The record gives the reactivity of an RNA of 177 nucleotides to DMS and 2A3. For 2A3, 6,319 sequencing reads were counted. Conditions: 150 mM KOAc, 10 mM MgCl2 and 150 mM bicine (pH 8.5), 24 C. Reactivities are given for positions 27 through 126.
RNA sequence: GGGAACGACUCGAGUAGAGUCGAAAAGAUAUGGAUCGCCCAUGGGAGCUGUUCGGAAACGAAGUAGCAUCGAUCAUGGCGAUCCUAAGUCAAAACGAACCAAUCGUCUUCGGACGAUUGGUUCGAACGACAGAACAAAGUUCGCUUUGUUCUGUCGAAAAGAAACAACAACAACAAC
Reactivity to DMS in 0.01 (KOAc 150mM, MgCl2 10mM, bicine 150mM(pH8.5), 24C), signal-to-noise 3, nucleotides 027 to 126: g000a050u010a300u010g000g010a000u000c000g000c160c030c080a010u000g000g000g010a030g030c000u010g010u000u000c000g000g000a100a090a150c020g000a020a010g010u010a000g010c000a230u020c120g010a110u000c020a010u000g000g000c000g010a010u000c000c000u000a000a070g010u000c030a060a060a100a190c030g000a000a010c000c000a010a000u000c000g020u000c000u010u020c220g030g000a020c000g010a000u000u000g000g000u000u000c000g000a000a040
Reactivity to 2A3 in 0.01 (KOAc 150mM, MgCl2 10mM, bicine 150mM(pH8.5), 24C), signal-to-noise 3, nucleotides 027 to 126: g010a010u050a020u130g010g000a020u010c010g030c000c170c000a020u010g050g050g020a050g000c010u010g040u080u020c020g010g040a070a060a030c010g000a050a020g230u250a000g020c020a160u280c040g110a080u110c020a000u000g010g000c030g000a010u010c000c000u000a010a010g030u000c030a010a000a100a100c030g000a000a000c000c000a010a000u020c020g010u000c020u110u150c300g130g010a000c000g000a000u000u000g000g000u000u000c010g000a000a020